Structure probing data (DMS) for a 177-nucleotide construct. Reactivities are given for positions 27 through 126. Conditions: 150 mM KOAc, 10 mM MgCl2 and 150 mM bicine (pH 8.5), 24 C.
RNA sequence: GGGAACGACUCGAGUAGAGUCGAAAAGUGAAGAAUAUUUAAAUGUAGUUAAAGAAGGCUUAAACAAUCGUUGGGUCGAUGUCUAUGAGAAUAAAGGUAAACGUUCAGGUGGCUAUUCAUCAGGUGCGAAGUUGUCCAAAUUCGUUUGGACAACUUCAAAAGAAACAACAACAACAAC
Reactivity to DMS in 0.01 (KOAc 150mM, MgCl2 10mM, bicine 150mM(pH8.5), 24C), signal-to-noise 1, nucleotides 027 to 126: g010u000g020a090a050g010a070a110u010a080u000u000u000a040a120a150u010g020u010a090g000u000u000a050a070a100g000a120a080g010g010c010u040u010a110a060a050c150a080a140u000c120g000u000u000g000g040g000u000c030g010a040u000g000u010c080u000a020u000g000a120g000a040a040u000a040a140a120g010g040u010a030a040a090c160g000u000u010c070a140g020g000u010g000g030c010u000a040u000u000c020a000u000c070a040g020g010u000g000c190